[RMDB]
RNA sequence: GGGAACGACUCGAGUAGAGUCGAAAAUUCCGGAGGUCUCUCUCGAGUUCCUCUAACUUCUUUCUUCCGGCCACCCACUGCUCGAGGAUCUCUUCUCUCCCUCCGCGGUUCUUCCUCGACUCGGACCGGCUCAUCUCGGCUAGAGGCGGCAGUCCUCCACUACAUAAAGCUUCGGCUUUAUGUAGUGAAAAGAAACAACAACAACAAC
Reactivity to 2A3 in 0.01 (KOAc 150mM, MgCl2 10mM, bicine 150mM(pH8.5), 24C), signal-to-noise 1, nucleotides 027 to 156: u160u010c020c000g020g050a010g050g020u020c000u010c000u030c000u080c170g000a010g030u070u080c000c000u020c000u000a110a170c060u170u180c050u050u230u020c050u100u020c030c010g050g020c040c020a070c030c020c010a070c090u140g020c040u040c050g010a040g060g000a030u040c080u010c000u220u050c070u040c010u070c010c030c010u090c030c020g030c010g030g000u030u020c030u080u050c000c010u040c000g050a020c000u000c040g040g050a080c020c010g000g000c000u000c000a070u040c020u010c010g060g000c050u050a030g000a010g030g000c010g080g060c020a000g030u060c000c000u010c000